[RMDB]
RNA sequence: GGGAACGACUCGAGUAGAGUCGAAAACGAAUGCUCGUAAAUGCUAUGUCUAGUGGACUAAUAAGAUAGACAUAAAUUACGAGCAAUGGUAUGUAUGUAACAUUAGUCCACUAUACAUGCAUACUAAGGUAGACCGAGAUUUCGAUCUUGGUCUACCAAAAGAAACAACAACAACAAC
Reactivity to 2A3 in 0.01 (KOAc 150mM, MgCl2 10mM, bicine 150mM(pH8.5), 24C), signal-to-noise 6, nucleotides 027 to 126: c020g030a130a010u060g000c000u000c010g000u000a000a030a010u140g030c050u050a010u010g010u000c000u000a010g000u000g000g010a000c000u000a000a190u120a130a040g110a110u130a020g000a000c000a000u030a010a080a010u030u010a010c000g000a000g000c000a000a010u000g000g000u000a000u000g010u000a000u000g000u000a030a000c000a050u020u090a000g000u000c000c000a000c000u000a010u000a010c000a000u000g000c000a010u000a000c000u000a040a010
Reactivity to DMS in 0.01 (KOAc 150mM, MgCl2 10mM, bicine 150mM(pH8.5), 24C), signal-to-noise 6, nucleotides 027 to 126: c040g010a120a110u000g000c000u000c010g010u000a000a050a110u060g020c250u020a010u000g020u000c010u000a010g010u000g000g010a010c010u000a100a110u050a090a090g010a190u030a010g000a000c000a000u000a020a080a090u010u000a000c000g010a010g000c010a010a010u010g000g010u010a000u000g000u000a000u010g000u000a010a130c300a090u020u020a000g010u000c000c000a000c010u000a100u010a000c000a000u000g000c000a000u000a010c000u000a050a090